[RMDB]
RNA sequence: GGGAACGACUCGAGUAGAGUCGAAAAUCUGGACCGUUCGCGGUCCAGAAACAACCGAGAAUGCGACUCGGUAUAUAAACGCAACCCUUGGAAACAAGGGAACACUCUGCUGCUUCGGCAGCAGAAACAUCACAUAUGUAUUCGUACAUAUGUGAUGAAAAGAAACAACAACAACAAC
Reactivity to 2A3 in 0.01 (KOAc 150mM, MgCl2 10mM, bicine 150mM(pH8.5), 24C), signal-to-noise 6, nucleotides 027 to 126: u020c000u000g010g000a000c010c000g010u040u050c260g000c020g110g000u020c000c000a000g010a000a010a000c010a000a030c010c010g000a000g010a060a070u030g000c000g040a040c020u000c000g000g010u000a010u000a000u010a040a010a000c000g010c010a030a140c000c000c000u000u010g010g020a060a040a020c000a010a010g000g000g020a000a000c020a030c010u030c000u000g000c000u000g010c000u030u050c200g110g000c000a000g000c000a000g010a000a000a000
Reactivity to DMS in 0.01 (KOAc 150mM, MgCl2 10mM, bicine 150mM(pH8.5), 24C), signal-to-noise 8, nucleotides 027 to 126: u000c000u000g010g010a000c000c010g040u010u010c200g040c010g030g000u000c000c000a010g000a000a080a110c130a120a300c020c000g000a000g000a030a070u000g010c010g000a040c000u000c010g000g000u000a020u010a040u020a000a000a010c020g040c010a050a300c020c000c000u000u000g010g000a150a090a210c010a010a000g010g000g010a070a030c180a060c110u000c000u000g010c000u000g000c000u000u000c200g030g010c000a010g020c000a000g000a020a080a170

Description
This 177-nucleotide RNA was probed chemically with 2A3 and DMS. Conditions: 150 mM KOAc, 10 mM MgCl2 and 150 mM bicine (pH 8.5), 24 C.